[RMDB]
RNA sequence: GGGAACGACUCGAGUAGAGUCGAAAACAUUGCAGCUUCGGCUGCAAUGAAUCUCUGGUGUCUACGACUCUACUCGAUAGAGGCUGGAGUAGUCGUUCCCGAUGGCGCCCCAAUUCGUUGGGGCGAACAGACUGAUCAAUUUCGAUUGAUCAGUCUGAAAAGAAACAACAACAACAAC
Reactivity to 2A3 in 0.01 (KOAc 150mM, MgCl2 10mM, bicine 150mM(pH8.5), 24C), signal-to-noise 3, nucleotides 027 to 126: c000a000u000u020g010c000a000g000c020u080u060c190g190g000c000u010g000c000a000a000u010g000a000a020u020c040u010c060u110g080g040u060g040u090c100u100a070c070g010a000c000u020c000u000a000c000u000c010g000a000u000a010g040a000g040g010c060u070g050g040a050g030u110a000g010u030c000g000u000u010c010c000c010g010a030u040g070g050c010g010c000c000c000c000a010a020u050u040c110g030u090u010g000g000g000g000c000g010a010a000
Reactivity to DMS in 0.01 (KOAc 150mM, MgCl2 10mM, bicine 150mM(pH8.5), 24C), signal-to-noise 1, nucleotides 027 to 126: c020a000u000u010g030c000a000g000c010u000u020c180g040g000c010u010g040c010a010a000u000g000a110a090u010c060u000c050u000g000g000u010g000u000c070u000a180c050g000a020c000u000c000u000a000c010u000c000g010a030u000a040g000a130g000g000c040u000g000g000a070g010u000a070g020u000c010g000u000u000c010c000c000g010a010u010g010g060c000g000c000c000c000c000a000a040u000u020c150g030u010u000g000g020g000g000c000g010a000a030
Overview:
The record gives the reactivity of an RNA of 177 nucleotides to 2A3 and DMS. The 2A3 profile rests on 4,769 reads. It was measured as part of the RMDB library M2PK50. For DMS the reverse transcriptase was MarathonRT. The reactions ran in a buffer of 150 mM KOAc, 10 mM MgCl2 and 150 mM bicine (pH 8.5), at 24 C. Values cover nucleotides 27 to 126. The DMS profile rests on 1,997 reads.